RNA sequence: GGGAACGACUCGAGUAGAGUCGAAAAGUCAACAGAAAGAGCUGCUCUAUAUCGGCAGUUCCGAUGGGUUGUGCAUUAUACUGUUUUAUAUCAGUAAAGGAGGAGGUGGAUUAUUACAAGGGCACCGCACCCGCUUACUGUUCGCAGUAAGCGGGUGAAAAGAAACAACAACAACAAC
Reactivity to DMS in 0.01 (KOAc 150mM, MgCl2 10mM, bicine 150mM(pH8.5), 24C), signal-to-noise 3, nucleotides 027 to 126: g000u010c090a050a030c040a060g000a140a120a130g000a010g030c010u000g020c000u010c110u070a140u060a100u020c270g030g040c030a000g000u040u000c000c030g020a190u030g020g020g030u010u010g000u030g040c080a070u010u000a150u000a040c040u000g000u020u000u040u040a130u060a050u010c010a030g000u010a010a080a090g010g020a060g000g020a120g010g020u000g020g000a110u010u030a080u050u020a130c180a060a120g000g010g000c020a040c040c020g070
Reactivity to 2A3 in 0.01 (KOAc 150mM, MgCl2 10mM, bicine 150mM(pH8.5), 24C), signal-to-noise 3, nucleotides 027 to 126: g100u030c000a010a030c020a140g100a050a070a000g010a000g010c000u000g000c010u010c080u240a260u110a120u300c080g000g020c000a010g010u000u000c010c010g110a060u090g000g060g000u000u050g000u000g000c000a000u110u060a020u150a130c000u000g090u100u040u110u000a210u100a070u170c000a000g070u130a000a060a040g020g080a020g000g000a010g020g120u110g010g000a180u090u030a030u020u030a120c040a050a040g000g020g000c000a010c000c000g010